[RMDB]
RNA sequence: GGGAACGACUCGAGUAGAGUCGAAAAAGAGCCGGAUACGUCCGGCUCAACGGGGGAUACGUGUGGUGCCGUCCGCUCCCCCUAUGGCAUAACAAAUGCAACACACACUAGGCUACGGCCUAGUGAAAAAAGGUGUAUGUGUUCGCACAUACACCAACAGGUAGUAGAUCUUCGGAUCUACUACCUGAAAAGAAACAACAACAACAAC
Reactivity to 2A3 in 0.01 (KOAc 150mM, MgCl2 10mM, bicine 150mM(pH8.5), 24C), signal-to-noise 2, nucleotides 027 to 156: a000g000a000g000c000c020g000g010a030u030a020c130g090u000c000c000g000g000c000u010c000a000a000c010g010g000g010g020g000a050u100a170c070g060u050g010u050g110g050u120g150c040c010g050u020c010c030g010c020u020c000c020c000c000c010u010a110u100g070g000c030a020u030a210a130c030a170a120a010u050g040c070a160a020c000a020c000a000c010a000c120u000a000g000g000c010u000a030c280g100g010c000c000u000a000g010u010g050a070a010a000a000a000a000g000g000u000g000u010a000u000g020u000g030u040u040c150g010c080a000c000a010u000a000c000a000c000c000a000a000
An RNA of 207 nucleotides, treated with 2A3 and read out base by base. For 2A3 the reverse transcriptase was SuperScript II with manganese.